[RMDB]
RNA sequence: GGGAACGACUCGAGUAGAGUCGAAAAUUCUGUAAUUUCAAAAGUAAAAACAAUGCCUGGAACAAAGUCCCCUCCGUUAUCCAGAGAAGCGAUGGCCGUGUUCACAGUUUUUCCAUCAGCCGCGGAAACGCUAUCCUAAUUUCGAUUAGGAUAGCGUAAAAGAAACAACAACAACAAC
Reactivity to DMS in 0.01 (KOAc 150mM, MgCl2 10mM, bicine 150mM(pH8.5), 24C), signal-to-noise 2, nucleotides 027 to 126: u010u000c020u020g010u010a090a110u000u000u000c030a020a050a050a170g010u000a030a040a120a090a020c090a080a100u010g020c090c020u000g020g020a050a090c050a050a090a200g000u000c010c010c010c010u000c010c020g010u010u010a090u000c020c010a060g000a110g000a090a070g020c010g020a050u000g000g030c100c110g000u000g000u000u000c090a050c050a020g020u000u000u000u000u000c040c000a050u000c090a100g030c070c060g000c090g000g000a090a070